Chemical mapping of a 207-nucleotide RNA with DMS and 2A3. For 2A3, 1,156 sequencing reads were counted. The RNA was probed in 150 mM KOAc, 10 mM MgCl2 and 150 mM bicine (pH 8.5) at 24 C.
RNA sequence: GGGAACGACUCGAGUAGAGUCGAAAAUACACAUACAAAGCCUCAUCAGCCAUGGCUUACCAGACAAAGUAUAGCGGGCGCACAAAGCACAAGCUCUAAAGAAGCUCUAAAGACGCUCUCCAACCUCUCCACAAUAUAUACACAAGCCCUAAACUGAUGCACCUAGAUAUUUCGAUAUCUAGGUGCAAAAAGAAACAACAACAACAAC
Reactivity to DMS in 0.01 (KOAc 150mM, MgCl2 10mM, bicine 150mM(pH8.5), 24C), signal-to-noise 1, nucleotides 027 to 156: u000a050c030a110c080a140u010a090c070a070a050a120g010c020c010u000c060a120u000c070a130g010c030c010a080u000g010g000c010u030u010a120c020c030a170g000a170c050a080a040a080g010u000a080u000a060g000c070g000g040g040c090g000c080a120c070a050a130a140g070c030a120c030a010a040g020c010u000c030u000a110a080a130g020a100a050g000c000u010c040u000a070a130a210g000a050c040g000c000u030c020u010c000c040a050a070c010c030u000c010u020c010c000a040c030a100a100u000a080u000a080u000a060c050a070c050a020a070g020c020c020c020u000a050a040a060c040u000g000a300
Reactivity to 2A3 in 0.01 (KOAc 150mM, MgCl2 10mM, bicine 150mM(pH8.5), 24C), signal-to-noise 2, nucleotides 027 to 156: u070a030c010a000c030a060u160a040c050a080a090a010g000c000c010u010c010a100u010c000a030g020c020c040a050u040g000g010c000u040u000a060c000c030a060g040a100c020a050a130a000g040u030a120u050a100g020c000g000g080g010c020g000c030a030c050a060a100a060g000c040a030c020a050a020g020c030u030c010u060a160a190a010g050a040a010g030c000u000c000u070a080a110a020g060a010c010g000c000u000c000u000c020c010a090a130c000c020u030c020u020c000c010a040c010a040a030u090a000u030a000u030a130c050a010c000a120a010g000c010c010c050u150a260a040a020c040u090g090a020
2A3 adducts were read by reverse transcription with SuperScript II with manganese. DMS adducts were read by reverse transcription with MarathonRT. Source: RMDB library OK3TST, as collected in RNAgym. The DMS profile rests on 1,350 reads.